An RNA of 177 nucleotides, treated with DMS and 2A3 and read out base by base. The reactions ran in a buffer of 150 mM KOAc, 10 mM MgCl2 and 150 mM bicine (pH 8.5), at 24 C. For 2A3 the reverse transcriptase was SuperScript II with manganese. It was measured as part of the RMDB library OK2TRN.
RNA sequence: GGGAACGACUCGAGUAGAGUCGAAAAGACAUGGCUGAUCUGUCUCAGUGGUACCUGGGGGCAAAGCAGGGAGCCGGGCGGUGGAGGCCAACAUUGUUACCAAGUUGGCUCUGUCUCAACACAGGGAGAUUAACUCACUUUUCGAAGUGAGUUAAUCAAAAGAAACAACAACAACAAC
Reactivity to DMS in 0.01 (KOAc 150mM, MgCl2 10mM, bicine 150mM(pH8.5), 24C), signal-to-noise 9, nucleotides 027 to 126: g000a090c080a060u010g010g020c030u000g000a120u000c050u010g010u010c030u000c030a070g020u010g000g020u000a070c110c020u000g010g010g010g000g010c150a060a070a120g010c080a060g010g010g000a100g010c040c050g000g000g020c100g010g010u000g010g010a110g010g000c010c010a020a020c020a110u010u010g000u010u010a130c130c040a080a080g010u000u000g000g010c000u000c050u000g000u000c030u010c120a080a090c130a070c090a070g000g010g010a190
Reactivity to 2A3 in 0.01 (KOAc 150mM, MgCl2 10mM, bicine 150mM(pH8.5), 24C), signal-to-noise 5, nucleotides 027 to 126: g040a010c030a100u090g040g010c050u050g040a170u040c010u040g130u030c020u010c050a080g010u090g080g040u080a070c020c010u030g000g000g010g000g100c080a090a030a010g030c020a010g010g040g020a020g030c040c020g020g000g000c030g000g010u060g020g070a040g040g030c020c000a000a000c020a070u060u110g030u070u040a060c040c030a040a050g020u030u020g020g020c020u020c020u040g040u010c020u010c050a070a070c070a000c020a050g040g050g000a150